[RMDB]
RNA sequence: GGGAACGACUCGAGUAGAGUCGAAAAAGGCAUUAUGAGGCCUAUUUUGCAACUCAUCGGCAGAUGUAAAAAUGCCAGUUAAAUAUAACUGCAAAAAAUAACACAACUUACGCUUUAGCUGCCUAAAAACCAGCCGGCGUGACUUCUAUAGGAUUGCGUAUCUGUCGUACUUCGGUACGACAGAUACAAAAGAAACAACAACAACAAC
Reactivity to 2A3 in 0.01 (KOAc 150mM, MgCl2 10mM, bicine 150mM(pH8.5), 24C), signal-to-noise 2, nucleotides 027 to 156: a000g050g000c040a040u090u110a180u300g140a060g220g000c010c000u000a120u000u060u050u080g040c050a060a070c020u020c020a000u000c020g000g020c010a020g020a010u040g060u300a000a000a010a000a000u000g000c010c010a030g000u020u060a060a170a120u240a090u020a090a030c000u000g000c040a010a020a000a030a060a080u130a130a100c140a010c050a200a020c010u110u090a010c000g000c000u110u010u120a000g000c020u000g000c020c010u040a040a070a020a030a030c010c000a000g010c000c000g020g000c010g020u010g000a010c060u040u040c040u090a140u090a230g050g100a120u070u010g050c040